Overview
An RNA of 177 nucleotides, treated with DMS and 2A3 and read out base by base. Reactivities are given for positions 27 through 126. The reactions ran in a buffer of 150 mM KOAc, 10 mM MgCl2 and 150 mM bicine (pH 8.5), at 24 C. The 2A3 profile rests on 12,693 reads.
[RMDB]
RNA sequence: GGGAACGACUCGAGUAGAGUCGAAAAGAUAUGGAAUGUAACCAUACCUGCAGCUUUGAUCUCGGAAACGAGGGAGCUGCCUGUAUCCCUUACAUUCCUAAGUCAAAGAUUGCCUUCGGGCAAUCAACACUAAGGCAUACUUCGGUAUGCCUUAGUGAAAAGAAACAACAACAACAAC
Reactivity to DMS in 0.01 (KOAc 150mM, MgCl2 10mM, bicine 150mM(pH8.5), 24C), signal-to-noise 5, nucleotides 027 to 126: g010a040u000a300u000g000g010a020a010u000g010u000a010a030c100c130a010u000a000c010c040u010g000c010a010g010c010u000u000u020g010a050u010c000u000c020g010g000a110a100a200c020g010a010g020g000g000a010g010c000u010g020c000c020u000g010u000a010u000c080c060c040u000u000a010c010a020u000u000c000c000u000a040a120g000u000c040a090a120a120g000a020u000u000g010c000c000u000u010c200g020g010g020c000a000a000u000c010a080a230
Reactivity to 2A3 in 0.01 (KOAc 150mM, MgCl2 10mM, bicine 150mM(pH8.5), 24C), signal-to-noise 4, nucleotides 027 to 126: g020a020u080a060u140g010g010a020a000u010g000u010a000a020c110c050a040u010a010c000c030u010g000c010a000g000c020u300u300u140g090a090u120c000u010c020g040g070a140a100a080c010g010a000g000g000g000a000g000c000u000g000c000c000u000g000u000a000u010c050c000c020u020u000a010c000a000u000u030c010c010u020a150a020g040u050c060a170a020a090g010a020u010u000g010c010c000u030u110c300g090g000g000c000a000a000u010c010a010a010